[RMDB]
RNA sequence: GGGAACGACUCGAGUAGAGUCGAAAAGACGCCUGUGUGGCGAAGCGAGUAUGAGAAAGUGCCGCAAAUUAAACAGUCCAUCUAGCGGCAAGAUGGAUUGCUCGCAAAAAGAUCCAUAUCACCGAGACACCGCUAAAUCGUUCGCGAUUUAGCGGUGAAAAGAAACAACAACAACAAC
Reactivity to DMS in 0.01 (KOAc 150mM, MgCl2 10mM, bicine 150mM(pH8.5), 24C), signal-to-noise 1, nucleotides 027 to 126: g070a300c040g000c000c000u000g000u050g000u010g040g000c070g000a020a170g000c000g000a000g000u000a080u000g070a270g000a040a190a300g000u000g000c000c050g000c000a130a070a130u000u000a120a100a170c030a070g000u040c000c030a020u000c000u000a220g030c020g000g000c030a070a000g000a130u020g000g000a000u000u000g000c010u070c000g000c000a000a020a030a050a130g000a040u040c010c020a040u000a270u000c000a000c220c000g020a120g080a250
Reactivity to 2A3 in 0.01 (KOAc 150mM, MgCl2 10mM, bicine 150mM(pH8.5), 24C), signal-to-noise 2, nucleotides 027 to 126: g110a000c040g000c000c010u160g150u210g070u100g150g000c030g000a040a000g020c080g020a000g000u050a110u290g150a250g130a080a060a040g140u130g030c010c000g000c020a000a150a150u110u130a120a130a000c060a010g030u040c000c000a000u030c020u000a020g020c020g010g050c000a010a010g000a000u000g000g000a000u020u000g010c000u000c000g000c000a000a100a000a000a000g010a010u000c010c000a020u010a040u150c050a040c000c040g020a030g020a000
An RNA of 177 nucleotides, treated with DMS and 2A3 and read out base by base. The reactions ran in a buffer of 150 mM KOAc, 10 mM MgCl2 and 150 mM bicine (pH 8.5), at 24 C. High 2A3 reactivity points to a flexible backbone, as in loops and unpaired stretches. DMS adducts were read by reverse transcription with MarathonRT.